[RMDB]
This 177-nucleotide RNA was probed chemically with DMS and 2A3. DMS adducts were read by reverse transcription with MarathonRT. For 2A3, 1,728 sequencing reads were counted. The reactions ran in a buffer of 150 mM KOAc, 10 mM MgCl2 and 150 mM bicine (pH 8.5), at 24 C.
RNA sequence: GGGAACGACUCGAGUAGAGUCGAAAACUAUAUCGACGGUGAUCAAUCGAUGGCGACAGGGCUCACCACCGUCAAUCCGGGCGGCACGCUGGGCGGCACCGGCACCAUCGGCGGCGACGUUACGGUAGAGCGAUUUAGUAUUCGUACUAAAUCGCUCAAAAGAAACAACAACAACAAC
Reactivity to DMS in 0.01 (KOAc 150mM, MgCl2 10mM, bicine 150mM(pH8.5), 24C), signal-to-noise 2, nucleotides 027 to 126: c090u000a100u010a080u010c120g050a030c030g000g020u040g000a100u030c120a140a110u000c060g020a040u020g000g050c050g000a070c080a060g000g000g030c020u000c070a060c080c010a030c030c000g010u010c010a090a090u010c070c070g000g000g000c040g000g010c070a090c100g000c040u000g000g000g000c110g000g000c000a080c020c010g000g000c040a080c050c020a040u000c000g030g010c110g000g020c050g040a030c060g000u000u000a050c060g010g010u030a220
Reactivity to 2A3 in 0.01 (KOAc 150mM, MgCl2 10mM, bicine 150mM(pH8.5), 24C), signal-to-noise 1, nucleotides 027 to 126: c010u040a020u020a060u300c110g030a020c020g000g070u030g030a080u090c060a080a030u100c100g080a100u040g020g040c000g070a070c110a130g120g070g000c000u020c030a040c010c020a010c010c010g000u000c020a010a030u040c000c010g000g000g020c000g000g010c040a010c070g020c050u070g040g020g010c000g000g000c000a010c030c000g040g000c000a010c000c030a030u050c020g000g010c000g000g010c000g010a020c000g010u080u020a070c060g000g020u030a030

Annotation:
Reactivities are given for positions 27 through 126.